This 177-nucleotide RNA was probed chemically with DMS and 2A3.
[RMDB]
RNA sequence: GGGAACGACUCGAGUAGAGUCGAAAAGAGGCGGCCGAGGCGAUUAGCCAGCAGACGCUGCUCCGCCUGGCCUGCGAGGUGCGCCAGGUCGGCGACCGCCAGCCGCGGUUUACCGCCACCAGCAUCGCUCCUUAUGACCAUUCGUGGUCAUAAGGAGAAAAGAAACAACAACAACAAC
Reactivity to DMS in 0.01 (KOAc 150mM, MgCl2 10mM, bicine 150mM(pH8.5), 24C), signal-to-noise 4, nucleotides 027 to 126: g000a160g010g020c000g000g000c020c040g020a100g010g010c010g000a170u030u030a060g010c120c020a060g000c030a110g000a180c200g030c000u000g000c040u010c300c020g020c000c000u040g010g000c040c010u000g020c090g000a170g000g000u020g020c060g020c090c050a060g010g020u020c020g020g000c280g000a040c040c010g010c030c090a160g010c080c110g000c040g000g000u010u000u010a080c020c020g000c030c000a140c130c060a060g000c010a060u010c060g000
Reactivity to 2A3 in 0.01 (KOAc 150mM, MgCl2 10mM, bicine 150mM(pH8.5), 24C), signal-to-noise 6, nucleotides 027 to 126: g130a040g050g030c020g000g040c010c040g070a050g010g000c030g060a120u130u130a040g140c210c030a000g000c010a020g040a220c220g010c050u010g010c020u010c010c000g010c000c010u030g000g000c000c030u040g010c020g030a080g000g060u060g010c030g020c050c060a030g010g020u110c060g010g010c000g010a040c000c010g010c010c020a070g060c030c030g010c040g020g000u060u100u080a090c030c000g000c020c000a050c020c010a030g010c010a020u020c010g000
Reactivities are given for positions 27 through 126. The data come from the RNA Mapping Database (RMDB), library OK1LIB. The 2A3 profile rests on 7,556 reads.